RNA sequence: GGGAACGACUCGAGUAGAGUCGAAAAUCGAGUGAAUAAUUAUUGUCCUCAUAGAGUAUAUAAGGUCAAUAACGAAUGGCAAGGAGAGUUCUUGGACCAAUAUAUUUGAUAAAUAACCAAUAAUGGUCUAUUCUGGUAUAAUUGGUUAUAUAUAAGAUGCCAUACUUAUUUUCGAAUAAGUAUGGCAAAAAGAAACAACAACAACAAC
Reactivity to DMS in 0.01 (KOAc 150mM, MgCl2 10mM, bicine 150mM(pH8.5), 24C), signal-to-noise 1, nucleotides 027 to 156: u010c000g000a140g090u010g000a140a060u010a060a040u010u000a020u010u020g000u000c010c010u000c030a010u010a020g010a300g010u010a150u000a010u010a000a000g000g010u000c020a070a060u000a010a040c020g020a170a080u000g010g040c000a040a110g000g020a160g000a210g040u000u010c020u000u000g020g000a060c000c000a020a020u010a040u000a040u000u000u010g000a110u010a010a030a120u000a010a010c000c000a040a190u010a100a230u000g020g040u000c020u010a170u000u000c030u010g010g000u000a020u010a110a050u000u000g000g020u010u000a040u000a140u030a160u000a070a170g000a240
Reactivity to 2A3 in 0.01 (KOAc 150mM, MgCl2 10mM, bicine 150mM(pH8.5), 24C), signal-to-noise 1, nucleotides 027 to 156: u050c020g010a030g060u100g060a120a090u090a060a110u040u000a020u000u040g020u050c000c000u010c040a080u040a000g180a050g190u240a000u010a030u020a110a000g000g030u080c000a020a050u110a030a000c080g080a080a010u120g010g010c010a000a010g050g010a030g040a000g030u000u090c000u070u030g010g000a000c020c000a000a000u060a000u020a030u070u080u070g000a000u120a180a100a010u140a010a010c000c000a000a100u100a200a090u150g040g020u000c010u010a060u070u030c030u030g010g000u080a010u030a100a140u050u040g010g010u020u000a070u010a000u020a000u210a190a040g110a040